[RMDB]
RNA sequence: GGGAACGACUCGAGUAGAGUCGAAAACUCAGCUGUGUCUCUAGCACCCGCUCUCGGUAGCAGAGGAGGAAGAUGACCACCGAGCCAAACAGCAACCCAGUGAGAAAGAGCACUGCCUUGAAGCAGCCACCGUUUGGUUUUUCGAAACCAAACGGUGAAAAGAAACAACAACAACAAC
Reactivity to 2A3 in 0.01 (KOAc 150mM, MgCl2 10mM, bicine 150mM(pH8.5), 24C), signal-to-noise 1, nucleotides 027 to 126: c010u020c010a010g000c030u000g020u020g050u060c010u020c020u090a050g050c000a040c000c020c010g040c040u000c000u010c020g090g090u100a040g000c050a030g010a110g090g050a050g080g000a050a070g140a150u090g050a010c000c010a010c000c060g000a020g070c030c000a030a100a070c040a040g010c020a030a050c040c000c000a000g040u040g100a070g070a060a090a000g050a010g050c010a050c040u040g020c000c020u060u070g050a060a000g020c040a020g010c000
Reactivity to DMS in 0.01 (KOAc 150mM, MgCl2 10mM, bicine 150mM(pH8.5), 24C), signal-to-noise 2, nucleotides 027 to 126: c030u000c020a110g040c090u000g020u020g000u020c020u000c040u010a170g050c040a040c000c020c060g010c090u000c050u000c090g000g020u010a110g010c060a070g010a040g020g000a090g000g000a080a010g000a080u000g000a050c070c050a050c050c050g030a070g000c060c030a040a110a100c130a110g030c020a030a090c080c020c040a070g000u010g000a110g000a080a060a100g000a130g000c030a070c020u010g000c020c030u030u010g020a080a130g000c040a080g010c160